[RMDB]
RNA sequence: GGGAACGACUCGAGUAGAGUCGAAAAACGGGCAGUGGCGAUGGCAACGCGGCAGCCGCAGGGUCGACUUCUUCGCAGCCGCAACAGACGGGACACGGGCAAAGAGGGGGCCUCGUUCUGUUGGAAGCGGUGCACCAUAUUUCGAUAUGGUGCACCGAAAAGAAACAACAACAACAAC
Reactivity to 2A3 in 0.01 (KOAc 150mM, MgCl2 10mM, bicine 150mM(pH8.5), 24C), signal-to-noise 2, nucleotides 027 to 126: a000c030g000g040g000c030a060g030u060g020g040c030g060a110u090g040g020c050a050a090c060g000c000g060g000c020a010g060c020c030g040c020a010g030g050g000u090c050g020a040c040u050u010c000u040u020c090g010c040a040g030c020c010g000c010a020a030c020a030g000a010c000g000g000g020a010c030a030c110g060g030g020c040a050a080a070g080a060g020g010g000g020g010c010c010u040c000g010u100u050c010u030g030u070u030g010g010a070a020g050
Reactivity to DMS in 0.01 (KOAc 150mM, MgCl2 10mM, bicine 150mM(pH8.5), 24C), signal-to-noise 1, nucleotides 027 to 126: a210c100g000g000g010c030a060g010u030g000g040c070g000a190u000g000g000c120a060a020c100g000c030g000g150c070a050g000c010c020g000c150a020g010g000g000u000c010g000a120c140u000u040c000u040u000c000g040c060a050g030c000c000g000c030a000a070c110a120g000a070c000g000g000g020a210c080a110c090g000g000g000c120a180a060a060g030a150g000g000g000g020g000c040c000u000c100g000u000u000c000u000g000u050u000g010g020a020a090g000
Overview:
An RNA of 177 nucleotides, treated with 2A3 and DMS and read out base by base. It was measured as part of the RMDB library OK1LIB. The DMS profile rests on 1,109 reads.